[RMDB]
RNA sequence: GGGAACGACUCGAGUAGAGUCGAAAAUUGCACACACCGCCCGUCAAAGCACCCGAGUGGGGUCCGGAUGAGGCCGUCAUGCGACGGUCGAAUCUGGGCUCUGCAAGGGGGCUUAAGUCGGAACCCUCGGGUGAAUACUUUUCGAAGUAUUCACCCGAAAAGAAACAACAACAACAAC
Reactivity to 2A3 in 0.01 (KOAc 150mM, MgCl2 10mM, bicine 150mM(pH8.5), 24C), signal-to-noise 3, nucleotides 027 to 126: u060u070g030c020a040c000a000c000a020c100c070g040c030c020c000g010u030c030a040a000a020g000c000a000c010c000c010g000a000g000u020g000g000g000g000u010c000c000g010g010a000u000g010a020g020g000c020c010g010u010c030a140u300g220c220g070a000c000g010g000u010c000g000a000a000u010c010u000g000g010g000c010u000c000u000g000c000a000a010g000g000g000g000g000c000u000u010a010a010g000u010c010g000g070a110a100c010c000c010u020